[RMDB]
RNA sequence: GGGAACGACUCGAGUAGAGUCGAAAAUGCAGUUUUUUCAUCUAUAGCUGCCACUAUAGCUACUUCGUCACCUACAUAUCUUACAACAUCUUCAAGAAUUAAUCUAUCAUAUGGAGAUGGCUCUGGAGGGAUCGAUGGAUUUCGAUCCAUCGAUCCCAAAAGAAACAACAACAACAAC
Reactivity to 2A3 in 0.01 (KOAc 150mM, MgCl2 10mM, bicine 150mM(pH8.5), 24C), signal-to-noise 2, nucleotides 027 to 126: u300g000c130a020g000u050u000u000u000u000u030c100a170u020c060u050a030u140a030g020c010u020g020c000c000a040c000u050a030u020a130g020c000u020a020c000u070u090c040g070u040c080a040c000c000u000a050c100a060u130a180u270c050u180u120a110c000a050a040c000a000u000c000u000u000c020a020a000g110a120a080u240u270a180a110u110c130u220a080u060c150a080u030a130u090g000g000a070g000a000u030g030g000c000u000c040u000g000g030a000